[RMDB]
RNA sequence: GGGAACGACUCGAGUAGAGUCGAAAAGUUGCCGACGAACCUUCCAACCUUCCAAACGUCGUUUUCGACAACCUUCCAACCUUCCUAUCUACUCGAGAGGAGGAGGAGGAGGAGGAGGAGGAAUUAAAUCAUAGGAAGAAUUCGUUCUUCCUAUGAUAAAAGAAACAACAACAACAAC
Reactivity to 2A3 in 0.01 (KOAc 150mM, MgCl2 10mM, bicine 150mM(pH8.5), 24C), signal-to-noise 7, nucleotides 027 to 126: g060u060u070g140c040c010g000a070c020g040a060a090c010c020u030u030c020c020a100a090c020c010u070u030c030c000a090a100a080c070g020u010c020g000u070u040u060u140c020g010a010c010a040a050c010c000u090u020c030c030a070a080c030c020u080u100c030c000u060a090u050c000u040a070c020u010c040g040a030g010a020g070g030a030g010g020a040g010g030a040g010g010a070g000g050a040g020g040a040g010g050a030g030g020a030a040u150u160a130a170
Reactivity to DMS in 0.01 (KOAc 150mM, MgCl2 10mM, bicine 150mM(pH8.5), 24C), signal-to-noise 6, nucleotides 027 to 126: g010u010u010g030c060c030g020a110c120g010a100a110c040c030u010u000c030c030a080a100c060c020u000u010c020c060a070a120a130c160g010u000c020g020u000u000u000u000c030g010a050c050a090a150c060c030u000u000c010c020a090a110c080c030u010u000c000c000u000a110u010c010u000a050c070u010c050g000a040g000a130g010g000a090g000g010a130g000g000a110g000g050a120g000g010a100g010g000a160g010g000a140g000g000a300a080u000u000a040a080
Chemical mapping of a 177-nucleotide RNA with 2A3 and DMS. 2A3 adducts were read by reverse transcription with SuperScript II with manganese. The reactions ran in a buffer of 150 mM KOAc, 10 mM MgCl2 and 150 mM bicine (pH 8.5), at 24 C. High 2A3 reactivity points to a flexible backbone, as in loops and unpaired stretches. The 2A3 profile rests on 12,236 reads.